[RMDB]
RNA sequence: GGGAACGACUCGAGUAGAGUCGAAAAGCUACCGCGAGUACUUCGGCAUCCCGCCGCGCGACGAGCGCCAGGGCCAGCCGCUGGGCCAGCCGGUGGUGCUGAUGCCGAUCCCGCAGGACCUGGCGUAGUGCAUAUCGGGAUUCGUCCCGAUAUGCACAAAAGAAACAACAACAACAAC
Reactivity to 2A3 in 0.01 (KOAc 150mM, MgCl2 10mM, bicine 150mM(pH8.5), 24C), signal-to-noise 1, nucleotides 027 to 126: g040c030u060a050c020c000g070c090g080a070g020u110a090c000u040u040c020g020g010c000a080u050c000c000c020g000c030c010g090c020g000c000g050a050c060g050a140g050c020g050c000c000a020g000g030g000c000c030a050g050c020c000g050c080u120g020g050g010c030c030a010g050c010c010g120g040u120g040g050u140g020c110u050g030a060u080g040c000c010g000a040u120c000c000c030g050c030a070g050g000a040c000c020u020g020g000c040g030u080a070
Reactivity to DMS in 0.01 (KOAc 150mM, MgCl2 10mM, bicine 150mM(pH8.5), 24C), signal-to-noise 2, nucleotides 027 to 126: g010c140u010a020c060c020g030c060g000a130g040u010a070c090u010u000c000g000g020c020a030u000c010c200c030g020c020c030g010c150g020c050g020a090c140g000a200g030c000g000c020c020a040g000g000g000c070c070a100g030c060c120g000c070u000g020g000g010c030c040a110g000c020c020g010g030u010g010g020u000g020c120u010g000a070u010g040c010c000g000a090u000c020c020c040g040c070a110g000g000a100c030c020u010g000g000c010g040u000a100